Annotation:
Chemical mapping of a 177-nucleotide RNA with DMS and 2A3. The RNA was probed in 150 mM KOAc, 10 mM MgCl2 and 150 mM bicine (pH 8.5) at 24 C. 2A3 adducts were read by reverse transcription with SuperScript II with manganese. For DMS the reverse transcriptase was MarathonRT. It was measured as part of the RMDB library TTRDES. Values cover nucleotides 27 to 126.
RNA sequence: GGGAACGACUCGAGUAGAGUCGAAAAGAUAUGGAUGUACGUGAGCGAUAAGAAGAGUAUCGGAAACGAUACCUUCUUUUGACGCUCAGUACAUCCUAAGUCAAAGUUAUCGGUUCGCCGAUAACAAUCGACGUUAAUAGUUCGCUAUUAACGUCGAAAAAGAAACAACAACAACAAC
Reactivity to DMS in 0.01 (KOAc 150mM, MgCl2 10mM, bicine 150mM(pH8.5), 24C), signal-to-noise 4, nucleotides 027 to 126: g000a010u000a110u010g000g000a020u000g010u000a010c010g010u000g010a010g030c000g020a130u020a020a020g000a010a000g000a140g010u000a000u000c000g020g000a040a020a060c010g000a000u000a000c000c000u000u000c000u000u000u000u010g010a160c150g030c000u000c000a070g000u000a000c000a010u000c000c000u000a000a050g010u000c010a110a120a190g010u000u000a010u000c010g010g010u000u010c300g010c010c000g000a010u000a000a010c020a130a130
Reactivity to 2A3 in 0.01 (KOAc 150mM, MgCl2 10mM, bicine 150mM(pH8.5), 24C), signal-to-noise 4, nucleotides 027 to 126: g010a000u030a020u080g000g020a010u000g030u020a060c190g300u090g080a000g000c050g110a210u090a300a000g000a020a000g100a060g000u000a010u000c000g000g000a030a010a000c000g000a000u000a000c010c010u000u000c000u000u000u010u080g180a060c070g000c000u000c010a000g010u000a000c010a000u000c000c000u000a000a000g010u000c010a140a050a060g000u020u000a000u010c010g000g140u050u080c300g010c100c000g010a020u000a000a010c000a010a120